[RMDB]
RNA sequence: GGGAACGACUCGAGUAGAGUCGAAAAGUGGGGAGCUGCUUCAAGACAGCUACCGACUGCAGUUCUAUCUUUCAAGAGUUGACUGUACAGCCCGGUAUCUAGCUUUCUUGAGUUGAGCAAGUGCUGGUGUGUGAAACACAUUCGUGUGUUUCACACAAAAAGAAACAACAACAACAAC
Reactivity to DMS in 0.01 (KOAc 150mM, MgCl2 10mM, bicine 150mM(pH8.5), 24C), signal-to-noise 4, nucleotides 027 to 126: g020u010g010g010g010g010a110g020c020u000g010c040u000u010c100a040a040g000a060c050a020g010c000u000a030c010c000g010a060c010u000g010c020a020g010u000u000c070u000a090u000c010u000u000u020c300a120a120g000a030g020u000u000g000a040c000u000g000u000a110c100a080g030c070c030c030g020g010u010a070u010c140u010a060g010c030u000u000u000c020u000u000g010a060g010u010u010g000a070g000c030a050a060g010u000g010c040u000g000g020
Reactivity to 2A3 in 0.01 (KOAc 150mM, MgCl2 10mM, bicine 150mM(pH8.5), 24C), signal-to-noise 1, nucleotides 027 to 126: g000u000g010g060g020g000a050g050c020u050g050c040u060u070c010a010a050g050a060c020a000g030c000u000a020c000c000g000a010c010u020g000c000a000g000u120u040c000u040a120u020c000u060u300u180c140a150a050g020a010g190u080u060g060a000c000u000g020u050a090c000a000g020c070c220c010g010g020u050a070u000c090u070a020g030c000u080u160u030c000u000u070g040a100g010u150u200g100a050g060c040a110a000g060u030g050c080u110g070g050
This 177-nucleotide RNA was probed chemically with DMS and 2A3.
High DMS reactivity at an A or C suggests that its Watson-Crick edge is free.
The DMS profile rests on 5,891 reads.
The RNA was probed in 150 mM KOAc, 10 mM MgCl2 and 150 mM bicine (pH 8.5) at 24 C.
Source: RMDB library OK2TRN, as collected in RNAgym.